[RMDB]
RNA sequence: GGGAACGACUCGAGUAGAGUCGAAAAGCAGUAUACUGCCACUUGUGUGAGAAUACUUUUAGUACAAGCGAGUACACGCAGUAUACUGCCACUUGUGUGAGAAUACUUUUAGUACAAGCGAGUACACGCCACGGGAGGAAUUCGUUCCUCCCGUGGCAAAAGAAACAACAACAACAAC
Reactivity to 2A3 in 0.01 (KOAc 150mM, MgCl2 10mM, bicine 150mM(pH8.5), 24C), signal-to-noise 1, nucleotides 027 to 126: g000c000a000g000u000a000u000a020c000u000g000c020c050a000c000u060u000g000u050g000u030g300a000g210a300a300u110a140c000u300u280u090u140a090g000u000a020c000a020a020g020c000g030a030g000u080a180c030a060c170g000c000a000g000u020a000u000a000c080u000g000c000c000a020c060u050u060g050u000g000u000g300a000g150a260a000u240a050c000u200u000u000u000a000g000u000a000c000a050a000g170c000g080a030g000u020a050c000a000c000
Source: RMDB library OK1LIB, as collected in RNAgym. The record gives the reactivity of an RNA of 177 nucleotides to 2A3. The RNA was probed in 150 mM KOAc, 10 mM MgCl2 and 150 mM bicine (pH 8.5) at 24 C. For 2A3 the reverse transcriptase was SuperScript II with manganese.